[RMDB]
The record gives the reactivity of an RNA of 207 nucleotides to 2A3. 2A3 adducts were read by reverse transcription with SuperScript II with manganese.
RNA sequence: GGGAACGACUCGAGUAGAGUCGAAAAACGGUGCGGAAGUUCGCGCUUCCGUGAAACGCUAAAAUCGGACGGUGGCUGCAAGUCGCAUCGCAAAACCGCGGCAAGUGGAGUUAGCGAGAGGAGGCUGAAACCAUCCAACACUUCGGUGUUGGAUGAACGGCUUUCAACGAUUCGUCGUUGAAAGCCGAAAAGAAACAACAACAACAAC
Reactivity to 2A3 in 0.01 (KOAc 150mM, MgCl2 10mM, bicine 150mM(pH8.5), 24C), signal-to-noise 1, nucleotides 027 to 156: a000c090g020g020u030g000c020g050g020a060a030g060u110u220c040g050c010g000c030u010u020c000c000g060u060g090a070a070a000c140g030c110u160a080a000a000a040u110c000g040g010a010c030g000g050u020g020g030c050u090g020c090a000a080g010u010c020g030c070a030u010c080g020c030a060a100a000a020c030c050g060c000g020g040c040a110a070g020u030g070g020a050g050u050u040a020g050c050g010a020g010a040g060g000a020g010g060c000u010g000a110a070a000c060c000a040u000c010c000a010a000c020a020c020u070u050c150g130g000u000g020u000u000g020g000a000u000g030a000a020